Structure probing data (2A3 and DMS) for a 177-nucleotide construct.
RNA sequence: GGGAACGACUCGAGUAGAGUCGAAAAGAGGAUUCAACGAGCUUCGUAGCAACGAUAGCAACGUAGCUUUUGCUACGACCCCAGCUAUCGAGGGCAGCUACGUCCCGUGCUCGAGGGUAGAAUCCGACGAUAUGCUGGAGUUCGCUCCAGCAUAUCGAAAAGAAACAACAACAACAAC
Reactivity to 2A3 in 0.01 (KOAc 150mM, MgCl2 10mM, bicine 150mM(pH8.5), 24C), signal-to-noise 3, nucleotides 027 to 126: g120a020g000g000a000u000u000c010a080a020c010g000a010g020c000u080u020c010g020u020a000g000c010a040a080c000g010a000u000a010g000c010a050a100c020g000u000a000g000c000u170u230u190u300g010c000u000a000c000g200a210c040c000c000c020a020g000c000u010a000u030c000g010a140g050g130g010c080a040g000c030u010a010c000g000u010c030c050c020g040u050g000c000u010c020g020a110g070g070g040u120a090g000a000a000u000c000c000g000a010
Reactivity to DMS in 0.01 (KOAc 150mM, MgCl2 10mM, bicine 150mM(pH8.5), 24C), signal-to-noise 3, nucleotides 027 to 126: g020a190g020g000a040u000u000c000a170a200c030g010a030g030c020u000u030c020g000u000a010g010c010a150a120c040g000a010u010a020g010c010a080a080c030g020u000a000g000c000u010u000u000u010g020c000u000a010c000g000a230c120c050c090c080a150g000c010u000a000u010c020g000a070g000g010g000c250a090g010c030u010a020c050g000u020c120c030c100g010u000g020c010u000c010g010a090g010g010g000u000a060g000a010a040u000c010c000g000a190